Structure probing data (2A3 and DMS) for a 207-nucleotide construct. The reactions ran in a buffer of 150 mM KOAc, 10 mM MgCl2 and 150 mM bicine (pH 8.5), at 24 C. The DMS profile rests on 3,254 reads. In probing experiments dimethyl sulfate is read out at A N1 and C N3, which are open when not base-paired.
RNA sequence: GGGAACGACUCGAGUAGAGUCGAAAAACGAGGUACGCCUCGAAAAUAUGACCGGUGUCAUAGCCUCUUGCACACAGAGGUCGCGUGGGUUCAACUCCCCCCCUUUUCCGAGGGUAUCGGAAACCAAAAAACACAAUUUGGUUCGCCAAAUUGUGAACUGUAAGUUAUCCUUCGGGAUAACUUACAGAAAAGAAACAACAACAACAAC
Reactivity to 2A3 in 0.01 (KOAc 150mM, MgCl2 10mM, bicine 150mM(pH8.5), 24C), signal-to-noise 5, nucleotides 027 to 156: a000c010g000a010g010g010u060a040c170g060c010c000u000c010g030a080a030a000a020u110a070u080g020a020c040c060g130g030u140g030u110c020a040u030a050g010c020c000u010c020u040u120g070c170a060c010a010c020a120g010a010g000g000u020c010g010c020g040u110g060g020g020u080u160c050a050a060c080u030c010c000c000c000c000c020c010u030u060u010u000c000c000g000a000g000g010g020u070a030u000c000g000g000a000a000a010c020c020a040a040a000a060a030a000c000a000c000a000a000u000u000u000g010g000u020u020c050g020c060c000a000a000a000u000u000g000u000g010a020a020
Reactivity to DMS in 0.01 (KOAc 150mM, MgCl2 10mM, bicine 150mM(pH8.5), 24C), signal-to-noise 2, nucleotides 027 to 156: a140c040g000a040g020g020u000a030c180g080c020c000u040c030g010a010a030a040a110u010a030u000g000a050c010c050g090g010u010g030u000c010a010u000a060g030c030c010u000c010u010u000g020c100a090c090a120c170a030g010a040g030g000u000c070g050c090g020u000g030g030g040u030u000c050a070a300c040u010c000c010c000c010c030c000c020u000u030u000u000c000c010g010a050g010g020g040u010a030u000c000g020g000a010a020a120c070c070a000a030a080a140a110a190c000a030c000a000a010u000u000u000g000g010u000u000c300g040c000c000a000a000a000u000u000g040u000g000a000a070